[RMDB]
RNA sequence: GGGAACGACUCGAGUAGAGUCGAAAAAUGAUUGCGUUGCUAACUGGCAAAUAUUUUCGCUCAUAACAUCUGGAAUGAUGCCAAAAGAAAGGGUGCCUAUCGUCCACCAGACCGAUAACAGGGCGUGAUACCUAAACUCUUUCGAGAGUUUAGGUAUAAAAGAAACAACAACAACAAC
Reactivity to 2A3 in 0.01 (KOAc 150mM, MgCl2 10mM, bicine 150mM(pH8.5), 24C), signal-to-noise 9, nucleotides 027 to 126: a000u160g040a080u080u090g030c030g050u070u070g010c020u040a130a230c070u060g040g000c020a010a080a020u180a080u020u060u040u070c030g010c020u030c060a090u090a130a070c010a090u050c020u060g030g040a080a040u100g030a030u070g020c020c020a080a120a030a030g140a050a060a050g070g030g020u070g020c000c010u050a050u070c020g020u010c010c000a030c010c000a040g040a050c020c040g010a010u030a070a050c030a020g040g000g000c020g010u020g020
Reactivity to DMS in 0.01 (KOAc 150mM, MgCl2 10mM, bicine 150mM(pH8.5), 24C), signal-to-noise 9, nucleotides 027 to 126: a060u010g000a080u010u010g010c080g020u010u010g010c040u010a110a110c130u000g000g010c030a040a050a090u020a090u010u000u010u000c120g010c060u010c060a070u010a090a140c100a090u010c070u020g000g010a090a060u000g000a060u010g010c020c050a040a060a080a090g010a080a080a070g000g000g010u000g000c040c030u000a060u010c040g010u000c020c030a100c080c040a080g010a100c070c060g000a060u010a060a080c130a080g010g000g010c050g020u010g010